The record gives the reactivity of an RNA of 177 nucleotides to DMS and 2A3. Conditions: 150 mM KOAc, 10 mM MgCl2 and 150 mM bicine (pH 8.5), 24 C. For 2A3 the reverse transcriptase was SuperScript II with manganese. Values cover nucleotides 27 to 126.
RNA sequence: GGGAACGACUCGAGUAGAGUCGAAAAAAAUUGGAACUUCGUAGUUCGCCAGACGCCUUCUUCGUAUCAAGGAACUGGAAAUUGUACGGUGAGUCUGUCAUUUUAUUUUCUACUUUUCGUACCAGUCUCCGAAGCAGAAAUUCGUUUCUGCUUCGGAAAAAGAAACAACAACAACAAC
Reactivity to DMS in 0.01 (KOAc 150mM, MgCl2 10mM, bicine 150mM(pH8.5), 24C), signal-to-noise 1, nucleotides 027 to 126: a000a060a000u010u030g000g000a070a010c000u000u010c100g030u030a030g020u000u000c040g000c020c010a050g010a040c190g000c030c000u000u010c080u000u000c170g010u000a080u050c150a050a080g000g010a130a090c020u000g020g000a050a010a020u000u000g040u000a000c010g010g020u010g000a100g020u020c060u000g000u000c100a030u000u020u000u000a020u000u000u010u010c000u020a050c060u010u030u030u010c030g020u000a040c010c020a120g000u000c060
Reactivity to 2A3 in 0.01 (KOAc 150mM, MgCl2 10mM, bicine 150mM(pH8.5), 24C), signal-to-noise 3, nucleotides 027 to 126: a000a000a000u150u080g020g000a040a020c010u070u030c190g070u070a070g020u000u050c070g020c030c000a000g010a030c030g050c000c000u030u020c000u080u090c090g050u090a100u180c010a040a020g000g060a060a140c000u030g000g000a000a090a070u100u090g120u040a000c010g020g000u030g020a080g010u020c080u170g050u030c140a040u000u090u020u150a160u050u070u010u030c010u000a060c000u000u020u000u010c000g000u040a010c000c010a010g090u000c010